Structure probing data (2A3 and DMS) for a 170-nucleotide construct.
Conditions: 150 mM KOAc, 10 mM MgCl2 and 150 mM bicine (pH 8.5), 24 C.
2A3 adducts were read by reverse transcription with SuperScript II with manganese.
For DMS, 69,169 sequencing reads were counted.
The data come from the RNA Mapping Database (RMDB), library 15KLIB.
In probing experiments dimethyl sulfate is read out at A N1 and C N3, which are open when not base-paired.

[RMDB]
RNA sequence: GGGAACGACUCGAGUAGAGUCGAAAACUGGGCAACAUUCCGAGGGGACCGUCCCCCUCGGUAAUGGCGAAUGGGACCCAGAUCUCUCUCUAGCUUCCGAUAGAGAAGCGAGAGAAAGCUGGCUCUCUAGCCUUUGACUUCGGUCAAAGGAAAAGAAACAACAACAACAAC
Reactivity to 2A3 in 0.01 (KOAc 150mM, MgCl2 10mM, bicine 150mM(pH8.5), 24C), signal-to-noise 9, nucleotides 027 to 129: c020u040g020g090g010c030a100a030c000a100u020u000c000c000g000a010g000g010g000g030a100c090c080g200u290c020c000c000c000c000u000c000g000g000u000a000a000u000g010g010c020g070a090a070u130g000g000g010a020c010c000c000a010g010a050u030c020u000c000u000c000u000c020u060a040g000c000u000u000c010c010g250a290u160a200g140a020g000a020a000g000c000g000a010g000a000g000a010a000a000g030c010u000g000g000c000u000c000u000c010u040a070g020
Reactivity to DMS in 0.01 (KOAc 150mM, MgCl2 10mM, bicine 150mM(pH8.5), 24C), signal-to-noise 9, nucleotides 027 to 129: c020u000g020g020g020c060a140a100c060a040u000u000c000c000g020a000g000g000g000g000a160c150c250g020u080c120c010c000c010c010u010c010g000g000u030a000a010u000g000g000c150g040a080a040u070g000g000g000a050c190c010c000a020g000a070u000c040u020c010u000c000u000c020u040a070g010c000u000u000c000c000g020a200u040a170g000a140g030a020a010g000c010g000a020g000a010g030a010a030a020g000c040u000g000g000c170u030c010u010c010u000a140g020